[RMDB]
RNA sequence: GGGAACGACUCGAGUAGAGUCGAAAACAUCUUUCCUCCCUAUACAGUGACUCCAGCUUGGGAGGGGCAGGGCUAGGCUGAGCCAGCACUCCCUGUGGUGUCUGCCUGCCACGUGCAGCUCUGGAGUAAAACCUGGAGAAGUUCGCUUCUCCAGGAAGGAACGUUAGUUGUUCGCAACUAACGUUCCAAAAGAAACAACAACAACAAC
Reactivity to 2A3 in 0.01 (KOAc 150mM, MgCl2 10mM, bicine 150mM(pH8.5), 24C), signal-to-noise 2, nucleotides 027 to 156: c020a060u070c080u060u170u080c000c000u050c000c000c000u110a090u050a100c110a060g050u030g060a000c000u010c000c000a000g010c040u030u030g040g000g000a020g020g000g000g030c040a060g020g000g030c070u300a020g000g030c010u050g020a040g140c090c010a010g020c040a050c030u090c020c020c020u030g010u000g010g050u080g120u000c020u020g010c000c020u030g070c000c010a150c080g200u170g000c000a010g030c010u020c020u080g010g000a000g000u000a020a010a010a000c010c000u000g000g000a010g000a000a020g000u030u150c230g000c130u010u000c000u000c000c000a000g000g000a000a000